[RMDB]
RNA sequence: GGGAACGACUCGAGUAGAGUCGAAAAGGGCAAGAACACCCGCGUGCCGGAGUUCUUGGAGCGUCUCGGUGUUGGCGCUCCCGAGGCCGAGCAGGACAUCAUCAACUGCUUCUACUCCACGAUGCAGUAAUGGGAAAGUAUUCGUACUUUCCCAUUAAAAAGAAACAACAACAACAAC
Reactivity to DMS in 0.01 (KOAc 150mM, MgCl2 10mM, bicine 150mM(pH8.5), 24C), signal-to-noise 9, nucleotides 027 to 126: g000g010g020c010a050a040g000a030a020c020a100c150c000c030g010c090g030u010g020c150c030g010g000a200g010u000u010c010u000u010g010g010a020g010c010g010u000c000u010c090g020g010u000g020u010u000g000g000c020g010c010u000c010c000c030g010a090g030g010c020c020g000a090g010c130a060g020g010a070c040a040u000c040a110u010c120a120a140c020u000g000c010u000u000c020u000a100c070u000c030c040a140c170g000a040u000g000c040a040g010
Reactivity to 2A3 in 0.01 (KOAc 150mM, MgCl2 10mM, bicine 150mM(pH8.5), 24C), signal-to-noise 3, nucleotides 027 to 126: g040g000g000c020a040a020g010a050a020c030a150c020c050c050g030c080g080u140g130c180c020g000g020a030g020u030u010c000u020u020g000g010a010g000c010g020u010c020u040c110g040g050u070g030u050u030g000g000c010g010c000u020c010c000c000g130a100g040g000c010c010g000a050g010c050a020g000g120a020c010a030u060c000a020u030c020a060a060c010u000g020c000u040u020c020u050a090c040u030c040c020a040c050g010a010u060g010c000a000g050